[RMDB]
RNA sequence: GGGAACGACUCGAGUAGAGUCGAAAACAUUUUAACGCGUGUGCACUCUCUAACUCGAAUUACCCAGUUAUUUUCGACUUUACUCGAGUCGUUAUAGCGUGCGUUGAGAGAGUUGGCCGCGAUUGAACAUUGAUGUGACAUUCGUGUCACAUCAAUGAAAAGAAACAACAACAACAAC
Reactivity to DMS in 0.01 (KOAc 150mM, MgCl2 10mM, bicine 150mM(pH8.5), 24C), signal-to-noise 2, nucleotides 027 to 126: c250a080u010u000u000u010a020a080c060g010c010g020u010g020u000g000c040a100c020u000c010u010c020u010a070a080c050u010c040g000a080a060u000u000a100c030c000c020a140g010u000u010a060u000u010u000u000c000g010a010c000u000u000u000a000c010u000c010g020a010g000u000c000g010u000u000a010u000a070g010c030g020u000g010c080g000u000u010g000a120g000a060g000a030g010u000u010g020g000c010c010g010c030g000a130u000u000g010a050a120